Annotation:
This 177-nucleotide RNA was probed chemically with DMS and 2A3. 2A3 adducts were read by reverse transcription with SuperScript II with manganese.
RNA sequence: GGGAACGACUCGAGUAGAGUCGAAAAGAUAUGGACCGCAGGAGAGCAACAGCUCGGAAACGAGACAUGCUCUACCUGUCGGUCCUAAGUCAAAAUCAUUGUCUAGUGUUCGCACUAGACAAUGAAACUUUCAUCCGUAGUUCGCUACGGAUGAAAGAAAAGAAACAACAACAACAAC
Reactivity to DMS in 0.01 (KOAc 150mM, MgCl2 10mM, bicine 150mM(pH8.5), 24C), signal-to-noise 2, nucleotides 027 to 126: g000a060u000a300u000g000g010a010c000c000g000c010a000g000g000a050g000a010g010c010a020a040c270a210g000c010u010c000g000g000a060a080a230c030g000a010g000a040c140a280u000g000c000u000c010u000a090c010c000u010g040u010c010g030g000u000c010c000u000a020a090g000u020c040a130a030a130a090u000c000a000u000u010g000u000c000u000a000g000u000g010u010u030c270g030c000a010c000u000a000g010a000c000a000a000u000g000a020a040a090
Reactivity to 2A3 in 0.01 (KOAc 150mM, MgCl2 10mM, bicine 150mM(pH8.5), 24C), signal-to-noise 1, nucleotides 027 to 126: g000a000u050a030u110g010g000a000c000c000g030c000a010g000g000a020g010a000g000c020a010a100c090a160g020c000u010c010g040g010a030a040a020c000g010a010g010a030c040a070u080g000c000u020c020u080a210c000c000u010g000u060c000g000g000u020c000c000u000a000a010g010u030c010a030a000a020a180u030c000a000u000u000g000u000c000u000a010g000u010g070u130u100c300g050c150a000c030u000a010g000a000c000a000a000u000g020a000a000a000
For 2A3, 3,037 sequencing reads were counted. For DMS, 1,654 sequencing reads were counted. Conditions: 150 mM KOAc, 10 mM MgCl2 and 150 mM bicine (pH 8.5), 24 C. The data come from the RNA Mapping Database (RMDB), library TTRDEL. For DMS the reverse transcriptase was MarathonRT.